[RMDB]
RNA sequence: GGGAACGACUCGAGUAGAGUCGAAAAUCUGCGACAGGGCCGAAGCGUGAAACAAAAUACAUCUCGGCAAUGCUCUGCGCUUCUACAUACCAGCAGCCGAGGACAGACGCAGGUUACAAGCGCAGCAAAAUAUUUAAUUAUUCGUAAUUAAAUAUUUAAAAGAAACAACAACAACAAC
Reactivity to 2A3 in 0.01 (KOAc 150mM, MgCl2 10mM, bicine 150mM(pH8.5), 24C), signal-to-noise 3, nucleotides 027 to 126: u060c020u030g000c000g040a030c020a090g050g000g000c020c010g100a140a040g020c030g000u030g120a160a050a030c060a030a140a080a020u220a050c050a130u040c010u000c000g030g000c000a030a060u050g000c020u020c040u080g010c020g000c000u080u070c020u070a070c010a100u160a110c000c040a050g020c010a010g050c010c000g010a000g000g030a020c020a000g030a010c010g020c010a000g000g030u010u040a040c030a090a020g000c000g020c000a010g000c010a030
Reactivity to DMS in 0.01 (KOAc 150mM, MgCl2 10mM, bicine 150mM(pH8.5), 24C), signal-to-noise 3, nucleotides 027 to 126: u000c020u000g000c010g010a130c060a180g000g000g000c040c030g000a090a100g010c060g000u030g030a120a120a140c240a110a080a120a100u040a120c200a070u020c020u000c000g010g010c000a070a060u020g010c040u010c040u000g000c040g010c030u020u020c070u020a100c230a080u010a130c050c050a100g000c070a090g010c010c000g000a040g010g000a050c110a080g030a070c020g000c020a060g010g010u000u010a060c070a070a120g000c010g000c020a030g020c170a090
This 177-nucleotide RNA was probed chemically with 2A3 and DMS. For DMS, 4,267 sequencing reads were counted. Reactivities are given for positions 27 through 126.